Overview:
The data come from the RNA Mapping Database (RMDB), library RNAMAK. Structure probing data (2A3) for a 207-nucleotide construct.
[RMDB]
RNA sequence: GGGAACGACUCGAGUAGAGUCGAAAACAGGACCUGUUUCGACAGGUCCUGAAAAAGAUAUGGACAUGCGACUUCGACGAUCACUUAAUCGGAAACGAUUACGGGUGGGAGAAGGCAUGUCCUAAGUCAAAAACCACGCCGGUUCGCCGGCGUGGAACGAUCCUUUGUUCUUCGGAACAAAGGAUCGAAAAGAAACAACAACAACAAC
Reactivity to 2A3 in 0.01 (KOAc 150mM, MgCl2 10mM, bicine 150mM(pH8.5), 24C), signal-to-noise 1, nucleotides 027 to 156: c000a000g030g000a000c000c000u000g020u050u130u110c210g180a000c000a020g000g010u010c000c000u010g000a000a000a000a000a000g010a010u010a010u040g000g000a000c010a010u000g030c020g230a300c300u000u000c000g300a300c010g000a110u020c020a000c000u010u000a000a000u000c000g010g030a000a000a000c000g020a010u030u090a100c230g090g050g000u010g010g010g000a020g000a000a000g070g000c000a000u000g010u000c000c000u000a000a000g000u000c000a000a020a060a090a060c000c020a000c010g000c010c010g070g070u130u150c240g010c110c020g000g030c020g000u000g000g000a000a020
Description:
The 2A3 profile rests on 726 reads. The RNA was probed in 150 mM KOAc, 10 mM MgCl2 and 150 mM bicine (pH 8.5) at 24 C.